[RMDB]
RNA sequence: GGGAACGACUCGAGUAGAGUCGAAAACGGUCUUAUCCAACCUCUGUUUCGGCAGAGGACACCGUGCUCCACAGUUGUAAGACUGUGGGCCCGAGAGAAGUCGCUCUCUCUCGCCCCAUACAUCCUCUCAGGCAUAGAGAUGACCAUUUGCCUAGGGCACCGUCCCAAUGUUCGCAUUGGGACGGUGAAAAGAAACAACAACAACAAC
Reactivity to 2A3 in 0.01 (KOAc 150mM, MgCl2 10mM, bicine 150mM(pH8.5), 24C), signal-to-noise 1, nucleotides 027 to 156: c010g010g070u030c110u190u300a090u070c090c040a000a070c020c010u010c020u010g070u020u030u120c160g150g010c020a090g030a020g000g020a000c010a000c000c010g030u010g040c010u000c030c000a000c000a000g010u000u010g180u190a110a200g020a010c000u000g000u010g000g000g000c020c000c030g020a010g000a000g000a100a080g090u230c090g010c040u020c010u000c000u010c010u010c040g020c000c000c020c030a080u110a150c040a120u050c010c000u120c010u060c170a010g010g000c020a010u070a030g080a040g000a110u050g110a110c090c040a160u080u040u040g020c000c000u020a010g000g000g000
Record summary: Structure probing data (2A3) for a 207-nucleotide construct. For 2A3 the reverse transcriptase was SuperScript II with manganese. Conditions: 150 mM KOAc, 10 mM MgCl2 and 150 mM bicine (pH 8.5), 24 C.